[RMDB]
RNA sequence: GGGAACGACUCGAGUAGAGUCGAAAAGCAUGGUGUGGUGAAGCUACUAACCCAGGGCUCGGCCGGGACUGUUGUGGCGUGUGACAAGGUGCCUGGCCUUCUGCCAACCGACUAACCCACUAACCAGGUGGUGCUUAACGUUCGCGUUAAGCACCACAAAAGAAACAACAACAACAAC
Reactivity to 2A3 in 0.01 (KOAc 150mM, MgCl2 10mM, bicine 150mM(pH8.5), 24C), signal-to-noise 2, nucleotides 027 to 126: g110c090a000u080g000g000u050g010u200g010g000u000g240a270a030g000c000u000a070c000u030a120a030c000c030c030a110g140g000g000c080u020c300g000g010c030c000g020g000g000a000c000u130g020u300u000g070u080g000g040c020g000u300g070u050g120a000c060a010a100g030g020u040g300c000c000u000g000g000c000c000u020u000c000u000g000c000c010a000a000c010c000g000a000c000u000a000a070c020c020c020a010c040u130a040a170c000c050a040g000

The record gives the reactivity of an RNA of 177 nucleotides to 2A3.
For 2A3 the reverse transcriptase was SuperScript II with manganese.